[RMDB]
RNA sequence: GGGAACGACUCGAGUAGAGUCGAAAAGAGUCCCUGGCCAGUGUGAGUCCUAGCAUUGCAGGAGGGGAGACCCUGGAGGAGAGAGCCCGCCUCAAUUGAUGCCUGCAGAUUGAAUUUCCAGAGGCUUAUAAUGUGAAUCGUUCGCGAUUCACAUUAUAAAAGAAACAACAACAACAAC
Reactivity to 2A3 in 0.01 (KOAc 150mM, MgCl2 10mM, bicine 150mM(pH8.5), 24C), signal-to-noise 3, nucleotides 027 to 126: g110a030g060u040c020c000c000u000g030g020c020c010a040g000u010g010u030g090a040g050u060c000c010u040a040g020c050a110u030u150g030c020a030g020g010a030g040g010g000g000a060g020a050c020c010c010u020g020g030a020g030g000a050g000a010g000a010g030c000c000c000g060c010c000u010c000a060a050u070u150g020a070u110g040c000c000u010g000c010a010g020a030u030u080g040a110a130u060u050u010c040c010a040g020a050g190g000c000u010u000
Reactivity to DMS in 0.01 (KOAc 150mM, MgCl2 10mM, bicine 150mM(pH8.5), 24C), signal-to-noise 2, nucleotides 027 to 126: g000a210g020u010c010c010c000u010g000g020c030c010a050g000u000g000u000g030a080g030u010c040c020u000a130g000c070a060u030u000g000c050a070g030g000a110g000g000g000g010a160g000a130c020c010c000u000g000g000a040g000g000a060g000a070g010a120g010c040c040c030g000c000c000u000c030a110a080u040u010g000a080u030g020c030c010u000g000c090a060g000a090u010u000g030a080a140u000u000u000c010c020a100g000a070g020g000c030u020u000
Conditions: 150 mM KOAc, 10 mM MgCl2 and 150 mM bicine (pH 8.5), 24 C. The record gives the reactivity of an RNA of 177 nucleotides to 2A3 and DMS. 2A3 adducts were read by reverse transcription with SuperScript II with manganese. DMS adducts were read by reverse transcription with MarathonRT. Source: RMDB library RFM100, as collected in RNAgym.